[RMDB]
RNA sequence: GGGAACGACUCGAGUAGAGUCGAAAACUCGAAGGCAUGCGGCUCGCCGACGAUCUGCGCACGAGCCGCGGCGUGCUGCUGAUGACGAAGGGCAGCGUCGUGUCCGCGCACCAGGUCGCGCUCGUGAGCAUUUACCAUUAUUCGUAAUGGUAAAUGCAAAAGAAACAACAACAACAAC
Reactivity to 2A3 in 0.01 (KOAc 150mM, MgCl2 10mM, bicine 150mM(pH8.5), 24C), signal-to-noise 9, nucleotides 027 to 126: c010u010c020g030a060a030g090g010c060a060u160g020c020g010g010c030u030c040g060c050c030g080a080c020g050a150u060c060u210g040c050g000c040a010c020g010a010g040c020c020g000c000g000g000c000g010u040g010c020u070g000c010u030g030a110u130g100a080c090g070a090a070g040g020g020c010a020g010c020g020u030c010g000u020g060u010c020c020g000c000g000c020a020c030c040a060g080g050u050c020g000c010g000c020u030c020g080u060g050a030
Reactivity to DMS in 0.01 (KOAc 150mM, MgCl2 10mM, bicine 150mM(pH8.5), 24C), signal-to-noise 9, nucleotides 027 to 126: c030u000c020g020a100a130g010g010c030a050u000g020c020g010g010c030u000c030g010c120c020g010a150c060g000a100u010c100u000g010c080g020c070a100c010g000a020g010c040c030g030c010g000g010c030g010u000g010c030u000g020c010u000g010a080u010g000a090c110g010a110a110g010g000g010c020a040g000c020g010u000c020g010u000g000u000c020c050g010c060g010c040a070c070c210a080g010g010u000c030g010c100g010c020u000c040g010u000g000a210